[RMDB]
RNA sequence: GGGAACGACUCGAGUAGAGUCGAAAAGGAAAGCAAAGAAAGCAACGGGGCUAGCCGUCAGGUGUUCCACCCCCCGAGAGGGUACGAGUGAGGCUUAUCCCGGGGAACUCGGCGAAUCGUCCCCACAACGCUUCUGCGUUCGCGCAGAAGAAAAGAAACAACAACAACAAC
Reactivity to 2A3 in 0.01 (KOAc 150mM, MgCl2 10mM, bicine 150mM(pH8.5), 24C), signal-to-noise 9, nucleotides 027 to 129: g050g010a090a040a000g040c100a060a030a080g050a050a080a000g050c030a070a040c060g010g000g010g010c030u040a020g020c000c010g080u050c050a040g010g070u070g050u140u040c040c010a060c010c000c000c000c000c030g040a040g030a040g080g010g010u070a060c030g010a060g060u150g040a050g040g000c010u020u060a140u110c000c000c010g020g000g010g000a030a020c010u010c030g020g000c010g030a010a040u060c020g030u040c020c000c020c000a040c020a030a020c090g020
Reactivity to DMS in 0.01 (KOAc 150mM, MgCl2 10mM, bicine 150mM(pH8.5), 24C), signal-to-noise 9, nucleotides 027 to 129: g030g010a040a040a030g000c110a040a080a080g040a070a060a050g000c100a030a050c090g050g030g010g000c070u000a140g030c000c010g040u010c130a050g030g040u030g030u030u010c030c000a150c040c000c020c000c010c020g000a100g020a060g010g020g000u000a040c090g030a100g040u040g010a140g020g030c030u010u020a110u040c020c010c030g020g000g000g020a090a050c050u000c030g000g010c020g030a060a070u030c070g030u020c030c020c000c000a060c180a070a080c180g000
This 170-nucleotide RNA was probed chemically with 2A3 and DMS. For 2A3, 59,640 sequencing reads were counted. For 2A3 the reverse transcriptase was SuperScript II with manganese. It was measured as part of the RMDB library 15KLIB.